[RMDB]
RNA sequence: GGGAACGACUCGAGUAGAGUCGAAAAUCAUUACCAGCUAACGUAACACAAGUGGUUGUGCCGGACACAUUAAGAGUAGCUAGUAUUCUAGCACACACAUUAUAUGAUUAUCCGAGUCAUCAGUUAGGCUCUUAAUAUGGUUCGCCAUAUUAAGAGCAAAAGAAACAACAACAACAAC
Reactivity to DMS in 0.01 (KOAc 150mM, MgCl2 10mM, bicine 150mM(pH8.5), 24C), signal-to-noise 7, nucleotides 027 to 126: u010c120a100u000u000a210c040c040a110g010c020u010a050a050c070g010u010a060a070c070a080c080a110a080g020u010g010g000u000u000g010u000g010c030c020g000g000a040c240a060c040a040u000u010a040a050g000a160g020u000a090g010c020u000a020g010u010a180u010u010c010u000a020g000c010a070c070a050c090a060c090a110u000u000a050u010a020u000g000a070u000u000a100u000c020c020g000a100g010u000c040a050u000c090a080g010u000u000a070g010
Reactivity to 2A3 in 0.01 (KOAc 150mM, MgCl2 10mM, bicine 150mM(pH8.5), 24C), signal-to-noise 6, nucleotides 027 to 126: u070c010a020u030u190a060c010c020a020g050c020u030a040a040c020g110u080a100a010c060a010c040a190a120g060u080g100g140u150u070g010u060g000c030c000g020g000a000c010a000c000a070u070u090a080a030g070a020g080u040a030g010c010u000a010g020u060a240u210u120c010u000a000g010c020a020c000a000c000a000c010a060u070u150a160u070a020u160g100a070u070u100a030u090c030c000g010a020g040u020c010a080u020c030a040g040u030u050a060g090
This 177-nucleotide RNA was probed chemically with DMS and 2A3. Values cover nucleotides 27 to 126. Conditions: 150 mM KOAc, 10 mM MgCl2 and 150 mM bicine (pH 8.5), 24 C. The data come from the RNA Mapping Database (RMDB), library OK2TRN.